[RMDB]
RNA sequence: GGGAACGACUCGAGUAGAGUCGAAAAUGACGGUGCACGAUACAAUAAUAAAACACUUGAUGUCACAUAUAAGGAAAGAACGAUUGCUGAUGUGCUUGAAAUGGAGGUCUCUGAAGCACUUGAGUUCUUUUCAGCAAAUAGCCAGAUCCGACGUCGCCAUGCCAGUACAUUUCGAUGUACUGGCAUGAAAAGAAACAACAACAACAAC
Reactivity to 2A3 in 0.01 (KOAc 150mM, MgCl2 10mM, bicine 150mM(pH8.5), 24C), signal-to-noise 6, nucleotides 027 to 156: u130g040a030c030g010g030u070g040c060a020c080g040a020u080a100c090a090a050u180a140a040u150a070a120a080a020c110a030c050u090u100g020a040u080g070u070c020a030c030a060u170a020u050a100a070g020g000a020a010a010g000a030a000c020g080a110u040u130g030c040u080g010a060u100g010u020g010c000u040u040g120a110a130a100u140g060g030a020g030g060u040c040u010c010u110g030a010a000g000c010a020c030u050u070g070a050g030u010u010c000u000u000u010u010c000a000g010c010a020a050a090u080a060g050c010c010a040g010a050u010c010c060g020a010c030g030u020c010g000c010
Reactivity to DMS in 0.01 (KOAc 150mM, MgCl2 10mM, bicine 150mM(pH8.5), 24C), signal-to-noise 3, nucleotides 027 to 156: u010g000a080c060g000g020u000g030c020a100c050g010a180u000a100c070a080a090u000a080a130u010a080a140a070a060c050a090c060u000u020g000a080u000g000u000c010a160c090a110u010a080u010a070a150g010g000a040a040a060g010a040a060c020g000a180u000u000g010c030u010g000a130u000g040u010g010c000u000u000g010a060a070a070u000g030g010a060g030g030u010c070u000c030u000g010a080a050g000c030a030c080u000u010g000a200g020u000u000c030u000u000u000u000c020a140g010c040a050a040a090u010a080g000c030c030a100g000a090u010c040c010g010a060c030g020u000c010g020c090